Conditions: 150 mM KOAc, 10 mM MgCl2 and 150 mM bicine (pH 8.5), 24 C. This 177-nucleotide RNA was probed chemically with DMS. For DMS, 508 sequencing reads were counted.
[RMDB]
RNA sequence: GGGAACGACUCGAGUAGAGUCGAAAAUUUGAAGAAAUGAACGACGUCGAACGUGAACGGCUGGUUUGUGCAAUUGAUGAACUGCGUGGGGCAUUCUCAAAACGCCGUCAGGUCGGUGCAAGUGAGAGACCUCAGUACGUUUCGACGUACUGAGGUCAAAAGAAACAACAACAACAAC
Reactivity to DMS in 0.01 (KOAc 150mM, MgCl2 10mM, bicine 150mM(pH8.5), 24C), signal-to-noise 1, nucleotides 027 to 126: u000u030u000g000a180a140g000a140a170a070u020g000a160a120c080g020a260c060g010u000c070g020a040a060c050g000u000g000a140a100c110g000g000c000u000g020g000u000u000u000g030u000g010c160a020a150u030u000g020a030u000g100a010a060c080u010g010c010g030u000g010g000g000g050c190a070u000u000c000u000c010a010a100a260a190c040g000c000c020g010u000c080a190g020g000u000c000g010g050u060g000c090a170a120g010u000g010a070g000a140